[RMDB]
An RNA of 177 nucleotides, treated with DMS and 2A3 and read out base by base. For 2A3, 5,527 sequencing reads were counted. Conditions: 150 mM KOAc, 10 mM MgCl2 and 150 mM bicine (pH 8.5), 24 C. Values are in units of 0.01, from 0 to 300, in steps of 10. Reactivities are given for positions 27 through 126. Source: RMDB library TTRDES, as collected in RNAgym. DMS adducts were read by reverse transcription with MarathonRT.
RNA sequence: GGGAACGACUCGAGUAGAGUCGAAAAAAAAAGAUAUGGAAGCAAGGGAGAGCUGGUGCGAGGAGAAUCGGAAACGAUUCUCUACCCACCGCACCAAGCUCAUCGAUCUUGCUUCCUAAGUCAAAAACUAUAACUCAAUGUUCGCAUUGAGUUAUAGAAAAGAAACAACAACAACAAC
Reactivity to DMS in 0.01 (KOAc 150mM, MgCl2 10mM, bicine 150mM(pH8.5), 24C), signal-to-noise 2, nucleotides 027 to 126: a010a050a090a110a070g010a040u000a300u010g000g000a020a020g000c000a000a000g000g000g000a030g000a030g020c000u000g020g010u000g000c010g020a140g020g000a000g000a020a010u000c000g000g000a100a070a170c000g010a010u000u000c000u000c000u000a030c020c010c010a300c090c000g000c010a010c000c000a010a050g030c000u000c020a140u000c220g010a020u010c000u000u000g000c010u000u000c000c000u000a000a060g010u010c040a080a090a080a140a100
Reactivity to 2A3 in 0.01 (KOAc 150mM, MgCl2 10mM, bicine 150mM(pH8.5), 24C), signal-to-noise 1, nucleotides 027 to 126: a050a020a000a000a000g080a050u120a060u130g010g000a000a000g010c000a010a000g000g000g000a070g020a000g000c000u010g020g000u000g010c010g000a010g040g020a000g020a000a000u000c000g010g030a060a070a020c010g020a000u000u000c000u000c000u030a050c010c010c000a010c000c000g000c010a010c020c000a030a020g000c010u000c020a040u250c020g010a010u030c010u000u000g000c000u000u000c000c000u000a000a000g000u000c000a010a060a070a190a060